[RMDB]
The data come from the RNA Mapping Database (RMDB), library RNAMAK. This 207-nucleotide RNA was probed chemically with 2A3. Conditions: 150 mM KOAc, 10 mM MgCl2 and 150 mM bicine (pH 8.5), 24 C. The 2A3 profile rests on 922 reads.
RNA sequence: GGGAACGACUCGAGUAGAGUCGAAAAAGCGCUUCGGCGCUCGAAAAGGGGUCUUAGGUGGGAGAGACAUGGCUCCUACUGAAGCCUCCACGGUAGAGCCAACAGCUCUCCGUAACAUCCUAAGACGGAGGCACCCGAUUAUACUGUUCGCAGUAAAACGUAACCACGUAUUCGUACGUGGUUACGUAAAAGAAACAACAACAACAAC
Reactivity to 2A3 in 0.01 (KOAc 150mM, MgCl2 10mM, bicine 150mM(pH8.5), 24C), signal-to-noise 1, nucleotides 027 to 156: a000g000c010g030c010u040u060c190g100g010c000g010c020u000c000g020a060a000a000a010g120g010g010g050u010c000u000u000a020g000g000u000g010g010g000a020g000a020g010a120c110a160u010g000g000c000u060c030c040u080a000c000u000g000a070a000g020c000c010u060c000c000a010c000g020g020u000a000g010a000g040c010c000a040a010c030a150g020c000u010c000u000c000c000g000u000a000a040c000a180u190c000c000u000a020a010g000a020c060g030g000a000g000g000c030a020c000c010c000g000a020u190u090a130u070a130c090u070g040u100u090c280g000c190a000g020u150a040a190a000